[RMDB]
RNA sequence: GGGAACGACUCGAGUAGAGUCGAAAAGUUCAUGGGUAUGCAUGCCUACGUUAGCAUUGUGAAAAUAAUGUCUAAGGUCGCCCUUCCUCCUGCUCUGAUCCUUACCUGGCUGAGAAUCAGCGGUGCCACGUGCAGGAUAUUUCGAUAUCCUGCACGUAAAAGAAACAACAACAACAAC
Reactivity to 2A3 in 0.01 (KOAc 150mM, MgCl2 10mM, bicine 150mM(pH8.5), 24C), signal-to-noise 3, nucleotides 027 to 126: g050u050u050c070a090u140g050g000g000u120a060u220g090c030a030u110g000c010c030u030a080c060g080u020u040a010g000c010a020u030u070g020u070g080a030a070a010a030u110a020a040u050g080u080c030u040a040a040g040g010u030c040g040c010c000c000u010u040c010c000u010c000c000u020g030c030u000c010u050g020a070u000c010c000u000u030a060c020c030u030g110g010c040u040g010a030g060a120a060u070c020a010g060c010g060g010u040g000c010c020
Reactivity to DMS in 0.01 (KOAc 150mM, MgCl2 10mM, bicine 150mM(pH8.5), 24C), signal-to-noise 3, nucleotides 027 to 126: g010u010u010c100a080u000g010g000g020u010a060u010g020c120a070u000g010c100c020u000a040c080g010u000u000a030g010c020a020u000u000g000u010g000a090a090a140a020u000a030a030u000g010u010c010u000a050a050g020g000u000c140g010c020c020c020u000u000c030c010u000c040c040u010g000c040u000c030u010g000a050u000c020c020u000u010a040c050c070u000g010g020c050u010g010a110g010a070a070u000c040a030g010c070g010g000u000g010c100c090
An RNA of 177 nucleotides, treated with 2A3 and DMS and read out base by base. The data come from the RNA Mapping Database (RMDB), library OK2TST. 2A3 adducts were read by reverse transcription with SuperScript II with manganese. For DMS, 5,405 sequencing reads were counted. Conditions: 150 mM KOAc, 10 mM MgCl2 and 150 mM bicine (pH 8.5), 24 C.